[RMDB]
RNA sequence: GGGAACGACUCGAGUAGAGUCGAAAAUCAUACUUCUUCGGAAGUAUGACAAUAAAAUCAGCGGUAAAUAAUUAGCUCCGGUUACCGCUGAACCGGAGGAUAUAAGCGGGGCGUUCGCGCCCCGCAAGUACAAUAUGAUGUUCGCAUCAUAUUGUACAAAAGAAACAACAACAACAAC
Reactivity to 2A3 in 0.01 (KOAc 150mM, MgCl2 10mM, bicine 150mM(pH8.5), 24C), signal-to-noise 4, nucleotides 027 to 126: u010c000a000u000a000c010u010u030c000u020u060c200g070g010a000a000g000u000a000u000g010a010c000a010a130u280a090a100a000a060u030c000a010g020c000g100g200u140a060a100a070u110a060a120u180u140a070g080c000u010c000c000g040g020u020u030a130c000c000g010c010u000g000a000a000c000c010g020g000a010g010g020a040u080a030u030a300a010g010c000g020g010g070g020c010g050u040u070c210g020c000g000c110c030c000c000g000c000a000a000
Reactivity to DMS in 0.01 (KOAc 150mM, MgCl2 10mM, bicine 150mM(pH8.5), 24C), signal-to-noise 2, nucleotides 027 to 126: u000c000a000u000a020c000u000u010c010u000u020c150g030g010a010a010g010u000a010u000g000a030c150a080a090u020a020a070a140a100u000c010a000g020c010g010g010u000a020a060a050u010a010a100u010u010a120g010c000u000c000c000g000g000u000u000a060c030c000g010c000u000g010a010a020c010c000g010g000a020g000g000a110u020a050u010a100a100g010c000g020g010g010g040c000g060u000u000c190g020c000g020c000c000c000c000g010c000a000a030

About this RNA: The record gives the reactivity of an RNA of 177 nucleotides to 2A3 and DMS. The DMS profile rests on 2,685 reads. For DMS the reverse transcriptase was MarathonRT. For 2A3 the reverse transcriptase was SuperScript II with manganese.